[RMDB]
RNA sequence: GGGAACGACUCGAGUAGAGUCGAAAAGGUGCUCGGCAUGUCAGUUAAAGAGAAUAUGUCGCUGACGGCGCUGGACUAUUUCAGCCGCGCUGGCGGAAGCCUGAAACACAAAGAUGAGCAGCAGGCGCUAGCACGCCUGGUUCGCCAGGCGUGCUAGAAAAGAAACAACAACAACAAC
Reactivity to DMS in 0.01 (KOAc 150mM, MgCl2 10mM, bicine 150mM(pH8.5), 24C), signal-to-noise 2, nucleotides 027 to 126: g000g070u000g020c050u050c000g020g020c050a050u000g000u000c060a110g020u020u010a060a090a240g000a180g020a070a020u000a050u000g000u030c050g000c050u010g000a020c030g010g010c050g000c010u040g040g020a080c090u030a120u010u020u040c140a070g030c000c020g030c010g000c000u030g020g000c030g000g010a150a050g000c010c000u010g020a100a050a080c130a180c110a020a110a170g000a100u060g000a030g000c000a080g020c000a000g000g010c010g000
Reactivity to 2A3 in 0.01 (KOAc 150mM, MgCl2 10mM, bicine 150mM(pH8.5), 24C), signal-to-noise 2, nucleotides 027 to 126: g090g000u040g020c060u030c050g030g060c010a050u060g010u010c000a110g020u150u260a170a120a020g100a030g180a180a090u070a010u090g020u070c000g000c050u000g030a030c000g000g000c030g010c080u170g000g000a080c020u030a150u140u110u110c010a000g040c000c000g000c030g000c000u000g030g000c000g020g000a060a050g020c000c000u000g050a050a010a040c230a010c060a030a120a000g180a150u140g040a070g050c000a000g000c000a000g030g030c000g000
The record gives the reactivity of an RNA of 177 nucleotides to DMS and 2A3. DMS adducts were read by reverse transcription with MarathonRT. The reactions ran in a buffer of 150 mM KOAc, 10 mM MgCl2 and 150 mM bicine (pH 8.5), at 24 C.